[RMDB]
RNA sequence: GGGAACGACUCGAGUAGAGUCGAAAAGGCAAGCAAAGGCAAUUUAGUGAGCAUGAGUUCCAUUUACGAGUUUAUUGGUUACGAUCAUCUUGAGCUGAUGCUUUGAAAAAUUCAUGUUUGUGAAUCUAAGAUGGUUUUGGCGGACCCUUUGGCUAGCUCUAAGUGUGAACUUCGGUUCACACUUAGAAAAAGAAACAACAACAACAAC
Reactivity to 2A3 in 0.01 (KOAc 150mM, MgCl2 10mM, bicine 150mM(pH8.5), 24C), signal-to-noise 2, nucleotides 027 to 156: g050g000c020a010a030g000c020a010a050a030g050g010c020a010a030u050u030u050a090g020u050g040a000g040c000a020u030g040a020g040u030u020c030c020a030u100u100u120a080c060g000a020g060u060u110u170a100u110u130g080g000u100u100a020c060g010a110u030c010a000u000c030u020u080g030a030g000c010u040g090a070u100g020c010u090u050u060g100a050a060a010a030a050u080u070c020a010u030g100u140u180u160g030u060g040a040a020u010c030u070a070a000g000a050u040g000g060u040u020u030u140g030g000c030g040g010a020c020c000c000u020u000u070g050g000c070u030a020g030c010
Reactivity to DMS in 0.01 (KOAc 150mM, MgCl2 10mM, bicine 150mM(pH8.5), 24C), signal-to-noise 2, nucleotides 027 to 156: g020g050c020a030a100g040c060a040a090a090g000g000c040a050a080u010u000u000a090g010u010g020a100g090c000a090u030g010a150g010u010u000c010c050a170u000u000u000a150c090g000a110g030u020u000u010a020u010u000g000g000u000u000a080c040g000a080u000c070a020u010c080u000u010g000a060g060c040u010g010a200u010g000c040u020u000u000g000a040a100a040a060a090u000u000c020a030u000g010u000u010u000g020u000g010a060a010u010c030u010a040a100g020a060u000g040g020u000u000u000u010g000g040c030g020g000a110c080c050c050u000u000u010g040g010c050u010a090g030c140